[RMDB]
RNA sequence: GGGAACGACUCGAGUAGAGUCGAAAAUUGCAAGCCUUCGGGCUUGCAAGGUGUCGGAAUGCGGAAUAUAUAAUCCUCCGCUUAAGGAUUUUACCGACUUAAGUGCCAGGCUGUUCGCAGCCUGGAAAGCAGUGGUAACUUUCGAGUUACCACUGCUAAAAGAAACAACAACAACAAC
Reactivity to DMS in 0.01 (KOAc 150mM, MgCl2 10mM, bicine 150mM(pH8.5), 24C), signal-to-noise 1, nucleotides 027 to 126: u010u000g000c000a000a000g010c000c000u000u010c270g030g000g020c000u010u000g030c000a000a010g000g010u000g010u000c020g000g000a120a080u000g010c010g010g000a030a070u000a090u000a140u020a140a120u020c180c080u000c070c020g000c030u000u000a070a060g000g010a180u010u000u000u000a150c020c040g000a060c020u010u010a030a100g010u000g000c010c000a030g000g010c000u000g000u000u000c180g020c030a000g000c010c000u000g000g000a060a040
Chemical mapping of a 177-nucleotide RNA with DMS.
For DMS the reverse transcriptase was MarathonRT.
Conditions: 150 mM KOAc, 10 mM MgCl2 and 150 mM bicine (pH 8.5), 24 C.
Source: RMDB library M2PK50, as collected in RNAgym.